[RMDB]
RNA sequence: GGGAACGACUCGAGUAGAGUCGAAAAGAUAUGGACCUGCUUUUGACGCUGACUAUCGGAAACGAUAGAGAACAGCGAUAAGCAGCGUCCUAAGUCAAAGCGGCUAUUCGUUCGCGAAUAGCCGCAACACAUAAUAUUCCUUCGGGAAUAUUAUGUGAAAAGAAACAACAACAACAAC
Reactivity to 2A3 in 0.01 (KOAc 150mM, MgCl2 10mM, bicine 150mM(pH8.5), 24C), signal-to-noise 6, nucleotides 027 to 126: g020a010u040a020u090g000g010a000c000c010u010g050c050u110u090u070u160g300a180c110g000c000u020g020a080c010u020a000u010c000g020g000a030a030a020c010g000a010u010a010g060a020g080a300a040c000a010g010c070g070a030u020a020a000g000c000a000g040c060g000u000c000c000u010a040a010g010u010c030a060a080a070g000c010g010g000c000u000a000u010u000c000g090u060u150c300g000c000g200a000a020u000a000g000c000c000g000c000a000a000
Reactivity to DMS in 0.01 (KOAc 150mM, MgCl2 10mM, bicine 150mM(pH8.5), 24C), signal-to-noise 6, nucleotides 027 to 126: g000a030u000a190u010g000g000a020c010c000u000g000c000u000u000u000u000g010a180c090g020c000u000g010a280c000u000a000u000c000g010g000a060a050a110c010g010a010u000a000g010a100g010a110a190c020a010g020c000g020a060u000a010a020g010c000a010g000c240g010u000c000c000u000a010a080g000u000c020a080a100a100g020c000g010g000c000u000a010u000u000c000g010u000u010c270g000c020g000a020a010u000a000g010c000c000g010c000a010a040